[RMDB]
RNA sequence: GGGAACGACUCGAGUAGAGUCGAAAAGUACAGGGAGAUCAAGACAUGUACAGGGAGAUAAAGACAUGUCCAGUGAAAUGACUUCUGGUUUUGCUAAUGCAAUAUUCAUGAGAAUUUGCCAAGACAAUCAUAUUUAAUCCCAGAGAAUAAGAGUUUAGGUAGCUAUUUAGUUCGCUAAAUAGCUACCAAAAGAAACAACAACAACAAC
Reactivity to 2A3 in 0.01 (KOAc 150mM, MgCl2 10mM, bicine 150mM(pH8.5), 24C), signal-to-noise 4, nucleotides 027 to 156: g040u060a020c060a040g010g000g020a050g010a070u070c060a050a020g020a010c010a030u040g020u080a060c070a060g020g050g010a070g020a080u140a110a080a010g040a020c020a010u010g000u000c020c010a040g010u050g140a050a070a080u080g040a050c040u050u020c040u050g030g060u040u020u040u050g020c030u140a130a090u150g000c010a030a010u020a050u170u070c060a070u200g070a050g030a240a030u020u030u070g010c010c010a040a000g040a030c020a010a050u070c020a040u090a100u200u200u080a080a020u030c000c000c020a010g000a000g000a080a040u210a150a030g050a010g060u100u090u090a020
Reactivity to DMS in 0.01 (KOAc 150mM, MgCl2 10mM, bicine 150mM(pH8.5), 24C), signal-to-noise 2, nucleotides 027 to 156: g030u010a060c050a070g000g000g020a080g020a110u000c060a190a090g010a020c030a080u020g010u000a170c070a120g070g000g020a090g020a160u010a010a120a140g000a120c010a070u000g020u000c000c040a080g040u000g000a000a110a110u000g020a150c050u000u000c080u000g010g000u000u000u010u000g010c050u000a050a160u010g000c000a010a080u010a090u000u010c030a050u000g000a250g000a030a070u020u000u000g000c040c030a070a180g000a060c020a050a070u000c060a080u000a120u000u000u000a040a190u000c010c010c000a160g020a110g010a070a050u010a070a180g000a150g010u000u000u010a080
Conditions: 150 mM KOAc, 10 mM MgCl2 and 150 mM bicine (pH 8.5), 24 C. An RNA of 207 nucleotides, treated with 2A3 and DMS and read out base by base. DMS adducts were read by reverse transcription with MarathonRT. Values are in units of 0.01, from 0 to 300, in steps of 10. It was measured as part of the RMDB library OK3TST. The 2A3 profile rests on 2,125 reads.